[RMDB]
RNA sequence: GGGAACGACUCGAGUAGAGUCGAAAAGAUAUGGAUUGUUGGCAAGGGAGCGAUGUCGGAAACGACCUCGCUUUGAUCUUGCCAUCAAUCCUAAGUCAAAACACAGAACGGUUCGCCGUUCUGUGAAGAUAGAGUGUUCGUUCGCGAACACUCUAUCAAAAGAAACAACAACAACAAC
Reactivity to 2A3 in 0.01 (KOAc 150mM, MgCl2 10mM, bicine 150mM(pH8.5), 24C), signal-to-noise 1, nucleotides 027 to 126: g000a010u010a000u040g000g000a010u010u000g010u000u000g020g000c010a020a030g170g000g000a000g000c020g010a000u010g020u000c010g010g010a030a020a000c000g020a000c000c010u010c000g010c050u030u010u000g030a060u060c010u000u000g000c000c000a000u000c000a000a000u000c000c000u000a020a000g000u000c010a040a000a100a070c010a000c000a000g000a010a010c000g030g090u070u110c290g030c110c010g000u020u000c000u020g000u000g000a000a010
Reactivity to DMS in 0.01 (KOAc 150mM, MgCl2 10mM, bicine 150mM(pH8.5), 24C), signal-to-noise 2, nucleotides 027 to 126: g010a010u000a130u010g000g000a010u000u000g000u010u000g010g010c000a020a010g010g000g000a000g010c000g000a010u010g000u000c000g020g000a040a030a070c000g010a010c000c070u000c000g010c000u000u010u010g020a070u010c010u010u000g010c010c000a010u000c010a000a010u000c000c000u000a010a040g000u000c010a150a090a110a200c020a000c000a000g000a010a010c000g010g010u010u020c300g020c010c000g020u000u000c000u000g010u000g000a030a060